[RMDB]
This 207-nucleotide RNA was probed chemically with 2A3 and DMS. For 2A3 the reverse transcriptase was SuperScript II with manganese. The 2A3 profile rests on 9,464 reads. For DMS the reverse transcriptase was MarathonRT.
RNA sequence: GGGAACGACUCGAGUAGAGUCGAAAAGGGGUCGAACAUGAAACUCCAUGGAGCCUUGGAUUUAUGUAGCUGAAGCCUCCACGGCUACAUUGUCAGGCUCCACUAGGAGGAGUAUGUGUUCGACGGAGGCACCCAAAGAAUGCGUUCGCGCAUUCAACGUAAUGUUCAAGUUCGCUUGAACAUUACGAAAAGAAACAACAACAACAAC
Reactivity to 2A3 in 0.01 (KOAc 150mM, MgCl2 10mM, bicine 150mM(pH8.5), 24C), signal-to-noise 6, nucleotides 027 to 156: g100g010g030g010u010c010g000a000a000c010a010u060g050a240a140a050c000u010c020c010a100u060g000g000a010g050c100c100u210u210g160g000a060u260u300u110a020u060g000u000a000g000c010u010g030a170a000g030c000c010u010c010c010a030c010g000g000c000u000a000c000a000u000u010g010u010c070a050g000g000c010u000c000c000a000c010u060a040g080g090a080g010g010a000g010u010a040u300g010u010g010u010u000c000g000a000c000g000g000a000g000g000c020a040c000c000c000a070a140a000g000a000a000u000g000c000g010u060u090c220g010c000g000c130a000u000u000c010a000a000
Reactivity to DMS in 0.01 (KOAc 150mM, MgCl2 10mM, bicine 150mM(pH8.5), 24C), signal-to-noise 2, nucleotides 027 to 156: g020g020g010g020u000c010g020a030a020c030a030u000g010a220a130a130c000u000c010c000a170u000g030g010a020g030c000c000u020u000g010g020a050u010u000u010a010u000g020u000a000g050c010u000g000a080a080g010c010c000u000c000c040a300c020g020g010c000u000a010c010a010u000u000g000u000c020a110g020g000c010u010c010c010a010c080u000a100g030g010a120g000g030a080g050u000a060u000g000u000g020u000u000c020g030a010c030g010g000a010g080g040c030a120c020c000c000a120a120a200g000a040a000u000g030c000g020u000u000c300g000c050g030c000a030u010u010c000a000a270